[RMDB]
RNA sequence: GGGAACGACUCGAGUAGAGUCGAAAAGUCGUCUUCGGACGACAAAAGCGUACUACGAACCCUGUAGAGAGGUAGGCUCGCUAUCCCAAAUAGGAUAGCGGGCCUACUACCCACCUCUACAUGUGCUUCGUAUCGCAAACAUAACUUUCGAGUUAUGGGUACUGCAACAAUUCGUUGUUGCAGUACCAAAAGAAACAACAACAACAAC
Reactivity to 2A3 in 0.01 (KOAc 150mM, MgCl2 10mM, bicine 150mM(pH8.5), 24C), signal-to-noise 2, nucleotides 027 to 156: g000u000c010g000u040c000u010u030c280g110g000a020c000g000a020c000a030a000a000a080g020c040g000u110a100c030u020a000c040g000a000a000c000c000c000u000g000u000a010g000a000g020a000g030g000u000a000g000g010c010u000c000g000c000u000a000u010c000c020c000a180a300a210u220a070g000g000a000u000a000g020c000g000g000g000c000c000u000a000c000u000a000c000c000c000a040c000c000u000c000u000a000c000a000u020g020u020g010c070u000u020c000g000u000a030u300c000g000c000a000a100a000c000a010u020a000a030c030u140u120u170c300g090a040g040u020u020a020u080g110